[RMDB]
RNA sequence: GGGAACGACUCGAGUAGAGUCGAAAAAGUAUCUAAUUCGUUAGAUACUCGGGGACGGGUGAGGCGGCCGUGUGCGCAGACAGUGCUCCUGCCGCGCGCGCGAAUUUCGCCUAUUCGUAGGCGAAAAGUAGAUUCAUUACUUCGGUAAUGAAUCUACAAAAGAAACAACAACAACAAC
Reactivity to DMS in 0.01 (KOAc 150mM, MgCl2 10mM, bicine 150mM(pH8.5), 24C), signal-to-noise 4, nucleotides 027 to 126: a000g020u000a000u000c000u000a000a020u000u010c150g000u010u000a000g000a000u000a000c000u000c060g000g000g000g000a120c110g010g000g010u010g000a120g000g000c090g000g000c090c030g020u000g010u000g000c000g010c000a120g020a040c050a040g010u010g010c270u010c060c010u000g010c000c010g010c020g000c000g000c010g000c010g000a100a110u000u000u000c000g000c000c010u000a020u010u010c190g030u000a010g000g010c010g000a000a010a030a090
Reactivity to 2A3 in 0.01 (KOAc 150mM, MgCl2 10mM, bicine 150mM(pH8.5), 24C), signal-to-noise 3, nucleotides 027 to 126: a020g000u000a010u020c000u000a010a030u060u080c150g060u040u000a000g000a010u010a000c020u000c020g040g000g010g050a050c070g040g010g040u080g070a080g020g080c060g040g030c080c020g030u040g010u010g020c010g010c010a040g060a080c010a020g050u050g140c040u050c040c010u010g010c020c010g010c000g020c000g000c000g000c000g030a030a040u030u030u020c000g010c010c000u010a010u030u030c160g020u010a000g010g000c010g020a000a000a020a020